The record gives the reactivity of an RNA of 207 nucleotides to DMS and 2A3. Reactivities are rounded to 0.1 and cut off at 0 and 3. For DMS, 2,406 sequencing reads were counted. The data come from the RNA Mapping Database (RMDB), library M2RFPK. 2A3 adducts were read by reverse transcription with SuperScript II with manganese. For 2A3, 2,783 sequencing reads were counted.
RNA sequence: GGGAACGACUCGAGUAGAGUCGAAAAAGCCGGUCUACGGACCGACAAAACGUUCAUCUCGUUUUACGGGCCGCAUUAAGAUUGAAGCCAAGGAACGGGGACUUCAGACUACGACUACGGUCGUAGAUUACGCCUCCGAGUUUCGACUCGGAGGCAACUUCCUAAUAUGAUUCGUCAUAUUAGGAAGAAAAGAAACAACAACAACAAC
Reactivity to DMS in 0.01 (KOAc 150mM, MgCl2 10mM, bicine 150mM(pH8.5), 24C), signal-to-noise 1, nucleotides 027 to 156: a220g040c020c010g070g000u010c010u000a070c110g040g020a030c020c000g010a040c030a040a020a070a050c070g010u000u050c170a130u000c070u010c000g000u000u000u000u010a150c050g010g000g020c040c020g000c090a090u000u000a130a160g010a180u010u020g010a070a040g000c000c020a100a100g060g030a010a080c070g010g010g010g010a060c020u020u020c030a160g000a300c020u000a000c020g020a010c000u000a150c300g120g000u000c000g040u000a030g030a080u000u010a040c160g010c000c010u010c000c000g010a050g010u000u000u010c220g030a080c000u020c020g000g010a040g000g030c010a000a000
Reactivity to 2A3 in 0.01 (KOAc 150mM, MgCl2 10mM, bicine 150mM(pH8.5), 24C), signal-to-noise 4, nucleotides 027 to 156: a000g060c030c000g000g030u040c000u030a070c170g080g000a000c000c000g000a040c040a000a110a010a010c060g040u090u080c060a170u040c090u010c010g020u000u010u030u090a050c040g010g010g000c020c030g060c030a070u150u180a110a050g060a140u020u130g060a060a000g010c030c020a050a090g080g010a070a020c010g020g000g010g050a030c010u090u060c080a080g010a140c000u000a000c000g010a000c000u050a010c210g080g000u010c000g000u000a000g000a000u030u090a070c110g000c000c000u030c000c000g010a010g010u030u100u100c140g100a020c000u000c000g000g000a000g000g000c000a000a000